[RMDB]
RNA sequence: GGGAACGACUCGAGUAGAGUCGAAAACUAUAUGACUUUCAUUCAAGUGUGAGGGAGACAGCCUAGUCACUUGCAUUCCAUCAAAUCUCAACCUUUAUGCCUGAAUUGAGACCUUCGGCUACCACAAAACUACGAUAAGCUUCGGCUUAUCGUAGUUAAAAGAAACAACAACAACAAC
Reactivity to 2A3 in 0.01 (KOAc 150mM, MgCl2 10mM, bicine 150mM(pH8.5), 24C), signal-to-noise 2, nucleotides 027 to 126: c040u000a010u070a070u300g100a100c030u060u190u090c080a110u080u020c040a050a050g020u020g020u040g050a060g000g030g000a060g040a040c020a020g040c000c020u030a010g060u060c010a010c060u000u030g040c020a030u070u000c030c010a080u090c060a050a150a130u050c060u000c060a010a100c010c010u060u160u040a050u130g000c000c020u030g040a060a040u090u080g020a050g020a070c020c000u000u010c000g010g000c010u040a070c030c030a080c070a020a210
Reactivity to DMS in 0.01 (KOAc 150mM, MgCl2 10mM, bicine 150mM(pH8.5), 24C), signal-to-noise 2, nucleotides 027 to 126: c050u010a060u010a050u010g020a110c090u000u020u000c050a060u010u010c050a070a040g010u000g030u010g020a130g020g020g000a180g030a070c180a080g020c060c050u000a060g010u000c060a020c050u020u010g010c130a090u000u000c010c020a050u010c080a080a060a080u010c030u000c010a080a110c090c020u000u000u000a050u010g020c010c010u010g000a050a100u000u000g010a070g000a070c060c030u000u000c050g040g000c040u000a090c050c050a080c180a080a080
This 177-nucleotide RNA was probed chemically with 2A3 and DMS. DMS adducts were read by reverse transcription with MarathonRT. The 2A3 profile rests on 1,527 reads. Reactivities are given for positions 27 through 126. In probing experiments dimethyl sulfate is read out at A N1 and C N3, which are open when not base-paired. The DMS profile rests on 1,268 reads. For 2A3 the reverse transcriptase was SuperScript II with manganese.